[RMDB]
RNA sequence: GGGAACGACUCGAGUAGAGUCGAAAACAAUUUGAUGGAGCAACCGGGCCUGAACGUCGGUUAUCUUUCUUUCAACGUUGAGAAAAAACCACUGGAUAACGUCAAGGUUCGCCAGGCGCUGACCAUGGUGUAGUGGGUGAUUCGUCACCCACUACACAAAAGAAACAACAACAACAAC
Reactivity to 2A3 in 0.01 (KOAc 150mM, MgCl2 10mM, bicine 150mM(pH8.5), 24C), signal-to-noise 2, nucleotides 027 to 126: c010a050a040u150u060u290g090a080u080g010g000a010g020c030a040a080c020c000g010g020g070c030c050u030g000a050a010c030g120u100c060g010g000u060u000a050u020c020u020u050u010c020u040u100u020c040a140a140c140g150u170u230g010a040g030a060a020a020a020a030a020c100c000a040c120u060g070g030a150u090a110a000c010g010u030c080a060a080g070g000u060u060c030g010c030c020a060g000g000c040g010c040u050g000a070c020c000a040u050g070
Reactivity to DMS in 0.01 (KOAc 150mM, MgCl2 10mM, bicine 150mM(pH8.5), 24C), signal-to-noise 2, nucleotides 027 to 126: c110a060a090u020u020u000g020a010u000g010g000a110g010c120a020a110c120c000g010g000g070c010c040u010g030a100a040c130g000u000c110g020g020u000u000a030u010c050u000u000u000c020u010u000u010c100a070a160c270g020u010u010g000a110g000a000a040a040a060a080a030c050c060a150c140u010g040g000a090u010a150a060c020g000u000c060a130a060g000g040u010u000c090g000c070c030a040g030g020c290g000c010u000g020a120c000c010a040u000g010
Annotation:
Source: RMDB library OK2TST, as collected in RNAgym. Chemical mapping of a 177-nucleotide RNA with 2A3 and DMS. For DMS the reverse transcriptase was MarathonRT. The RNA was probed in 150 mM KOAc, 10 mM MgCl2 and 150 mM bicine (pH 8.5) at 24 C. For 2A3 the reverse transcriptase was SuperScript II with manganese.